[RMDB]
Notes
Structure probing data (DMS and 2A3) for a 207-nucleotide construct. For 2A3, 1,121 sequencing reads were counted. For 2A3 the reverse transcriptase was SuperScript II with manganese. Reactivities are rounded to 0.1 and cut off at 0 and 3. For DMS the reverse transcriptase was MarathonRT. Source: RMDB library OK3TST, as collected in RNAgym.
RNA sequence: GGGAACGACUCGAGUAGAGUCGAAAAUUCUAAGAAUUGCUCUGUGCCACCAAAUGGGUGGCAGACUUCUAGACAAGUUUUCUAAACUUGUCAGCCUCAACUACAAGUGAGCUGGUGAGAGAAAACAAACAUCACUAUCCAGGGGCUUUUGCUGGAACCGUAUAAAUACGUUCGCGUAUUUAUACGGAAAAGAAACAACAACAACAAC
Reactivity to DMS in 0.01 (KOAc 150mM, MgCl2 10mM, bicine 150mM(pH8.5), 24C), signal-to-noise 1, nucleotides 027 to 156: u000u000c030u000a130a210g020a110a100u000u000g030c050u000c040u010g010u010g000c000c020a010c000c010a120a180a200u010g020g050g100u000g000g030c000a000g010a030c010u010u000c020u000a100g010a010c030a010a230g010u000u000u000u000c150u000a070a080a300c010u000u000g010u000c000a030g020c050c020u000c020a110a050c030u000a090c160a090a140g020u000g010a030g040c020u000g030g000u000g010a090g020a130g010a030a050a040a170c020a120a100a150c050a080u000c020a060c030u010a050u010c000c000a060g040g010g000g010c030u000u000u000u000g000c040u000g000g010a060a140
Reactivity to 2A3 in 0.01 (KOAc 150mM, MgCl2 10mM, bicine 150mM(pH8.5), 24C), signal-to-noise 3, nucleotides 027 to 156: u070u020c020u060a070a070g040a070a080u120u100g010c020u060c020u060g170u120g130c000c010a010c000c000a070a190a300u280g100g000g000u000g010g000c000a000g000a010c020u020u000c020u040a020g000a030c030a110a030g000u010u000u050u110c070u160a220a170a130c000u000u000g010u030c000a000g020c000c000u030c020a060a120c040u190a110c060a150a070g030u010g020a060g010c020u000g000g030u020g030a050g010a000g020a030a090a030a010c040a010a060a020c030a080u100c020a010c080u110a050u040c020c000a050g010g000g000g070c000u140u140u110u070g000c010u030g010g060a060a070

The RNA was probed in 150 mM KOAc, 10 mM MgCl2 and 150 mM bicine (pH 8.5) at 24 C.